[RMDB]
RNA sequence: GGGAACGACUCGAGUAGAGUCGAAAAAGCUGGCCGGGCGGGGGCUGACCCCCACCUCCCUCCCGGAUGGGGUGGCUGCCGGGCGGAGACGCUCCUCACUUCCCAGACGGGGCGGCUGCCGGGCGGAGCCUGAUCAUACGUUCGCGUAUGAUCAGGCAAAAGAAACAACAACAACAAC
Reactivity to DMS in 0.01 (KOAc 150mM, MgCl2 10mM, bicine 150mM(pH8.5), 24C), signal-to-noise 2, nucleotides 027 to 126: a090g020c050u010g000g020c000c000g000g000g030c300g010g000g000g010g010c070u000g020a300c020c000c000c000c030a210c180c010u020c010c000c030u000c000c010c000g010g000a080u010g000g000g000g040u020g010g000c010u010g010c000c010g000g000g000c020g050g000a060g010a130c010g020c010u000c000c000u000c090a030c040u000u010c010c000c030a110g000a060c240g010g000g000g010c000g000g030c000u000g000c000c000g000g020g000c010g000g000a300
Reactivity to 2A3 in 0.01 (KOAc 150mM, MgCl2 10mM, bicine 150mM(pH8.5), 24C), signal-to-noise 2, nucleotides 027 to 126: a000g040c040u050g030g000c010c000g030g000g020c000g020g010g000g030g000c000u050g070a180c000c000c000c000c000a000c010c000u100c000c000c000u030c010c010c000g040g000a060u100g010g010g010g040u130g040g000c040u050g030c000c020g120g020g000c000g010g030a020g000a080c000g000c000u000c000c010u010c010a060c020u050u020c000c000c000a020g030a030c110g000g010g010g000c000g000g020c020u020g020c000c000g120g000g000c010g020g010a020